Structure probing data (2A3 and DMS) for a 170-nucleotide construct. Reactivities are given for positions 27 through 129. It was measured as part of the RMDB library 15KLIB.
[RMDB]
RNA sequence: GGGAACGACUCGAGUAGAGUCGAAAAAGGCCGGAGACGGAGAGGCAGGAGGUCCCGAGGAGUAUCCAAGCAAAGAAGGGGAAGGAUCUCGAGGAAAACAUCUCCCAAGAAGAAGCGGGAACAAUCUAUGGAUAUGGGUUCGCCCAUAUCAAAAGAAACAACAACAACAAC
Reactivity to 2A3 in 0.01 (KOAc 150mM, MgCl2 10mM, bicine 150mM(pH8.5), 24C), signal-to-noise 8, nucleotides 027 to 129: a000g090g000c020c010g020g010a040g000a040c050g020g010a030g010a000g040g000c040a030g000g020a040g010g020u040c000c000c020g010a030g020g000a010g010u050a030u000c040c020a060a040g060c030a120a110a080g110a040a050g050g000g000g020a040a020g020g000a020u000c010u010c010g000a040g000g000a020a060a020a020c060a130u050c030u000c020c030c000a020a020g030a020a000g010a020a020g020c050g010g010g010a010a020c030a030a050u040c020u120a140u200g140
Reactivity to DMS in 0.01 (KOAc 150mM, MgCl2 10mM, bicine 150mM(pH8.5), 24C), signal-to-noise 7, nucleotides 027 to 129: a060g010g000c060c030g030g020a070g020a080c090g010g020a010g040a080g000g030c130a070g000g030a060g000g020u000c070c000c000g000a040g000g040a070g020u000a070u020c040c050a040a040g050c200a100a100a080g040a060a050g060g000g030g040a050a060g040g030a060u000c000u030c050g000a020g000g000a040a050a060a090c170a110u020c010u040c010c010c010a010a010g000a060a030g000a040a050g030c080g020g020g040a060a080c120a050a010u000c070u020a100u100g010
Background: The RNA was probed in 150 mM KOAc, 10 mM MgCl2 and 150 mM bicine (pH 8.5) at 24 C. The DMS profile rests on 26,905 reads.